The record gives the reactivity of an RNA of 177 nucleotides to DMS and 2A3. It was measured as part of the RMDB library OK1LIB. For DMS the reverse transcriptase was MarathonRT. 2A3 adducts were read by reverse transcription with SuperScript II with manganese.
RNA sequence: GGGAACGACUCGAGUAGAGUCGAAAAUAAGGGCGGGUCGGCGGAGAAAAGCCUGCAACGCAGUCCGUUGGGGGCUCGCCAGGUGUGACUCCUGCAUUCGACCCUCUGGUCCGUGCGGCUAAGGUGCGCAUGGUACGGCGUUCGCGCCGUGCCAUGUAAAAGAAACAACAACAACAAC
Reactivity to DMS in 0.01 (KOAc 150mM, MgCl2 10mM, bicine 150mM(pH8.5), 24C), signal-to-noise 7, nucleotides 027 to 126: u030a090a090g000g000g020c120g000g000g010u000c000g000g000c020g000g000a020g000a030a080a090a250g010c010c000u000g000c110a130a080c050g000c140a030g010u010c010c010g030u030u050g020g010g010g010g010c010u000c030g010c140c000a000g000g000u000g000u020g010a240c010u000c010c000u040g060c030a150u040u020c020g000a020c000c000c020u000c020u000g000g000u010c020c030g010u020g010c070g000g000c050u010a070a090g000g010u010g000c080
Reactivity to 2A3 in 0.01 (KOAc 150mM, MgCl2 10mM, bicine 150mM(pH8.5), 24C), signal-to-noise 4, nucleotides 027 to 126: u140a020a020g030g000g010c010g010g020g000u020c010g030g000c000g020g000a010g040a010a110a000a000g000c000c000u020g010c020a020a010c040g040c090a000g010u010c000c020g030u070u210g090g050g000g000g000c000u010c020g030c050c010a000g000g010u030g020u040g110a020c000u020c010c010u080g010c010a080u060u090c010g000a010c000c000c000u000c010u000g000g000u000c000c000g010u040g030c030g010g000c000u040a050a010g030g010u030g020c040